[RMDB]
RNA sequence: GGGAACGACUCGAGUAGAGUCGAAAAGCGCUCAGGCGCGGGCCGCAGGAGCAGUGUUUGUCGACCCGAUCGCCGACCACUGGUUUGUCGACAGGCCCGAGCUGAUCGGCGCGGAUGGCGUGCAUCCCCGGCAUGAUUAAUUCGUUAAUCAUGCCGGAAAAGAAACAACAACAACAAC
Reactivity to DMS in 0.01 (KOAc 150mM, MgCl2 10mM, bicine 150mM(pH8.5), 24C), signal-to-noise 3, nucleotides 027 to 126: g010c020g040c010u000c110a260g020g010c010g000c000g030g000g030c010c000g010c070a300g000g010a010g020c010a020g000u000g000u000u010u010g030u010c010g000a020c000c090c140g010a200u000c050g000c000c000g000a010c010c020a030c010u000g000g000u000u010u000g010u010c040g000a280c080a140g000g000c000c010c010g000a050g000c010u000g000a170u010c180g000g000c000g020c020g010g000a050u010g000g000c160g030u000g010c060a090u010c040c010
Reactivity to 2A3 in 0.01 (KOAc 150mM, MgCl2 10mM, bicine 150mM(pH8.5), 24C), signal-to-noise 2, nucleotides 027 to 126: g000c010g000c010u040c080a050g060g000c000g000c000g040g040g000c050c010g010c050a000g030g050a020g100c010a000g000u000g000u020u070u030g010u000c000g000a010c000c160c110g070a300u070c040g030c050c010g020a000c000c010a010c000u010g250g160u090u030u070g220u170c080g030a220c070a130g000g000c000c000c000g000a010g010c020u010g010a110u150c080g020g010c010g000c000g020g000a000u020g030g100c240g040u110g050c010a030u020c010c030